[RMDB]
RNA sequence: GGGAACGACUCGAGUAGAGUCGAAAAAAGAACCUUUUGAAUUGCCUUUGGAGUCAUACCCUGGGUAUCUUGGUAUCAUCUUGGGUGAGGGACUAAGAUUGCGGGAGAAAACGUUAUCAAUGGCCAAACACCAUUGGUGUUUCGACACCAAUGGUGUAAAAGAAACAACAACAACAAC
Reactivity to 2A3 in 0.01 (KOAc 150mM, MgCl2 10mM, bicine 150mM(pH8.5), 24C), signal-to-noise 1, nucleotides 027 to 126: a010a030g090a060a050c020c000u080u070u030u160g160a160a120u110u120g020c010c000u040u030u110g060g020a050g010u020c000a030u100a180c010c010c000u040g220g000g000u060a020u020c020u030u070g070g010u040a070u100c020a030u030c040u090u130g230g090g000u060g060a050g000g060g050a010c010u010a000a000g000a000u020u060g030c020g000g050g020a060g030a020a040a010a010c040g030u080u060a030u140c010a050a030u040g010g000c010c040a090a090
This 177-nucleotide RNA was probed chemically with 2A3. The 2A3 profile rests on 1,964 reads. It was measured as part of the RMDB library OK2TRN. Values cover nucleotides 27 to 126.